[RMDB]
RNA sequence: GGGAACGACUCGAGUAGAGUCGAAAAGAUAUGGAGUAUGUCCCUUCAGAGCUGGAUCGUCGGAAACGACGGCACAGCGACGAAGAAGGGAGCAUACUCCUAAGUCAAAGCCAGCUUCGGCUGGCAAGAUCAGAGGUAUCUUCGGAUACCUCUGAUCAAAAGAAACAACAACAACAAC
Reactivity to DMS in 0.01 (KOAc 150mM, MgCl2 10mM, bicine 150mM(pH8.5), 24C), signal-to-noise 3, nucleotides 027 to 126: g000a070u000a300u000g000g010a020g030u020a000u000g020u000c000c000c000u000u000c000a020g000a130g020c010u020g000g000a050u000c000g020u000c000g020g000a190a070a240c010g020a000c000g000g000c300a040c000a010g020c010g010a090c300g000a110a110g000a000a010g000g000g000a030g000c000a010u010a000c000u000c000c000u000a010a050g000u000c060a090a140a190g000c010c000a010g020c000u000u000c300g000g000c000u000g000g010c020a010a050
Reactivity to 2A3 in 0.01 (KOAc 150mM, MgCl2 10mM, bicine 150mM(pH8.5), 24C), signal-to-noise 1, nucleotides 027 to 126: g040a010u070a050u210g000g000a030g000u020a010u020g080u070c000c000c000u000u020c010a040g020a000g000c010u010g000g010a070u040c000g000u000c010g050g000a030a080a070c030g010a000c000g000g000c040a000c000a010g010c000g020a070c010g000a040a080g010a000a010g010g000g010a060g040c010a000u000a000c000u000c000c000u000a030a010g000u020c030a100a040a040g000c000c020a000g030c020u110u170c300g220g000c010u000g000g020c010a000a020
The data come from the RNA Mapping Database (RMDB), library TTRDES. This 177-nucleotide RNA was probed chemically with DMS and 2A3. DMS adducts were read by reverse transcription with MarathonRT. The DMS profile rests on 2,240 reads. The RNA was probed in 150 mM KOAc, 10 mM MgCl2 and 150 mM bicine (pH 8.5) at 24 C.